[RMDB]
RNA sequence: GGGAACGACUCGAGUAGAGUCGAAAAGCAUGCGAAAGGAUGGUGGAUGGGAAAGCAUGCCGCGUACGGAAACCAUCCCCGAAGGAUGGGAAAGCAUGCACGUACGGAAACCAUCCAAUAUAGCGUACGGAAACCAUCCCGUACGGAAACCAUCCGCCCCAAGUAGGUAGUUCGCUACCUACUUGGGAAAAGAAACAACAACAACAAC
Reactivity to DMS in 0.01 (KOAc 150mM, MgCl2 10mM, bicine 150mM(pH8.5), 24C), signal-to-noise 1, nucleotides 027 to 156: g010c050a080u020g010c010g010a150a120a130g040g030a020u020g010g010u000g000g010a170u010g010g000g010a010a070a180g060c000a030u000g020c040c060g010c040g040u000a160c000g020g000a100a100a210c000c000a060u000c010c000c010c210g000a070a230g010g000a020u000g000g020g000a020a110a160g000c070a050u000g080c080a150c000g000u000a010c010g040g000a160a060a110c020c000a020u000c040c040a040a090u000a060u000a090g020c010g060u000a030c000g020g010a080a050a160c120c130a200u010c060c000c000g020u000a020c050g000g000a080a050a030c010c000a050u040c020c010g000c220
Reactivity to 2A3 in 0.01 (KOAc 150mM, MgCl2 10mM, bicine 150mM(pH8.5), 24C), signal-to-noise 2, nucleotides 027 to 156: g000c010a010u020g010c030g160a110a060a100g000g000a000u010g000g020u050g020g000a010u010g000g010g040a050a100a070g060c040a020u140g060c010c040g100c010g040u070a020c080g050g060a010a140a000c000c000a000u010c050c000c000c010g120a070a020g000g020a000u010g000g000g020a060a090a010g010c010a000u050g010c000a000c050g010u000a020c010g030g030a080a000a000c000c000a020u000c000c000a010a000u190a040u050a060g060c000g000u000a000c000g000g000a220a010a010c070c010a040u010c010c020c000g010u010a000c000g020g050a090a060a020c000c000a000u010c040c010g020c010
The data come from the RNA Mapping Database (RMDB), library OK3TST. This 207-nucleotide RNA was probed chemically with DMS and 2A3. Values cover nucleotides 27 to 156. The RNA was probed in 150 mM KOAc, 10 mM MgCl2 and 150 mM bicine (pH 8.5) at 24 C. The DMS profile rests on 1,627 reads.